[RMDB]
RNA sequence: GGGAACGACUCGAGUAGAGUCGAAAAACGAUGGAGUACGCUCCAUCGAAAGGCGCUGCUCGGACACCCCGGCUCCGCUGCGCCGGCCAUGCCAGCUGACGGCUGGUCGCGGUGUGAUGUCGACCAACAUUCCGAGAUGGUUCGCCAUCUCGGAAUGAAAAGAAACAACAACAACAAC
Reactivity to DMS in 0.01 (KOAc 150mM, MgCl2 10mM, bicine 150mM(pH8.5), 24C), signal-to-noise 1, nucleotides 027 to 126: a140c080g000a020u000g000g000a000g030u000a110c300g050c030u000c000c000a030u000c000g000a040a110a220g000g000c000g000c000u000g000c000u000c020g020g000a060c160a210c000c000c020c020g000g000c010u000c010c000g020c000u000g000c020g030c000c000g000g000c020c100a140u050g060c030c010a020g000c040u010g020a110c270g000g000c000u000g050g000u040c010g010c030g000g000u000g000u030g000a000u020g010u000c000g000a150c080c160a090a090
Reactivity to 2A3 in 0.01 (KOAc 150mM, MgCl2 10mM, bicine 150mM(pH8.5), 24C), signal-to-noise 5, nucleotides 027 to 126: a010c000g000a010u010g000g010a010g010u070a040c240g040c090u000c000c000a000u000c000g010a040a010a010g000g000c000g010c000u000g010c010u010c000g020g010a020c010a070c000c010c000c000g000g000c000u000c020c010g000c010u010g000c000g000c020c000g010g000c020c010a110u230g060c030c030a070g060c100u150g080a090c070g020g000c000u010g010g010u080c040g000c010g020g000u050g100u170g030a060u160g010u010c010g010a060c050c010a030a100